[RMDB]
RNA sequence: GGGAACGACUCGAGUAGAGUCGAAAAGAUAUGGAAUGGUGACAUGAGAUUUUGGUCGGAAACGACCAAAAUCUCAACAGCGCAUUCCUAAGUCAAAGCUUACUGGACCUUCGGGUCCAGUAAGCAAUCGUGUUUACUUGUUCGCAAGUAAACACGAAAAAGAAACAACAACAACAAC
Reactivity to DMS in 0.01 (KOAc 150mM, MgCl2 10mM, bicine 150mM(pH8.5), 24C), signal-to-noise 1, nucleotides 027 to 126: g000a030u010a300u000g000g020a020a000u000g010g040u010g000a050c160a240u000g000a030g010a040u000u000u010u030g000g010u010c000g000g000a050a100a200c000g010a040c000c000a020a000a010a010u010c020u000c010a010a020c160a150g010c000g000c010a020u000u000c010c000u010a040a090g020u000c030a090a090a190g010c000u000u000a000c020u000g010g000a060c000c000u000u010c230g030g020g000u000c000c000a000g000u000a010a000g020c000a020a000